[RMDB]
RNA sequence: GGGAACGACUCGAGUAGAGUCGAAAAGGCUGUUGCCAUGAUAUAUAUGGAUGAGACAGAAGUGGCCCCGUUGACGAGUUUAACUUAGAUUAAGUAGGACGCAUGAUCUUGAGCUCUUUUCCUAUACCGAAUACAAUUCGUUCGCGAAUUGUAUUCGAAAAGAAACAACAACAACAAC
Reactivity to DMS in 0.01 (KOAc 150mM, MgCl2 10mM, bicine 150mM(pH8.5), 24C), signal-to-noise 3, nucleotides 027 to 126: g000g000c000u010g010u000u000g010c010c010a080u000g010a130u010a120u010a110u000a030u000g040g010a130u010g020a160g010a040c030a040g000a120a110g020u000g020g000c030c010c030c050g020u000u000g010a080c070g000a070g020u000u010u000a060a060c040u010u000a040g010a120u000u000a030a050g010u000a090g000g000a050c090g020c070a060u010g010a080u010c060u010u010g000a070g000c040u000c020u000u000u010u010c000c010u000a070u010a110c220
Reactivity to 2A3 in 0.01 (KOAc 150mM, MgCl2 10mM, bicine 150mM(pH8.5), 24C), signal-to-noise 1, nucleotides 027 to 126: g010g020c030u020g030u150u100g040c000c010a000u010g110a020u030a010u020a000u040a030u180g030g020a050u090g030a020g010a090c010a040g050a150a040g120u040g110g020c000c030c000c040g040u030u100g040a070c030g030a020g110u100u130u100a090a000c020u000u100a000g050a170u240u000a100a030g030u030a020g030g040a000c050g020c040a040u090g040a040u020c020u020u040g010a020g000c000u000c000u090u070u000u000c000c000u030a060u040a080c020
Notes
Conditions: 150 mM KOAc, 10 mM MgCl2 and 150 mM bicine (pH 8.5), 24 C. An RNA of 177 nucleotides, treated with DMS and 2A3 and read out base by base. For DMS the reverse transcriptase was MarathonRT.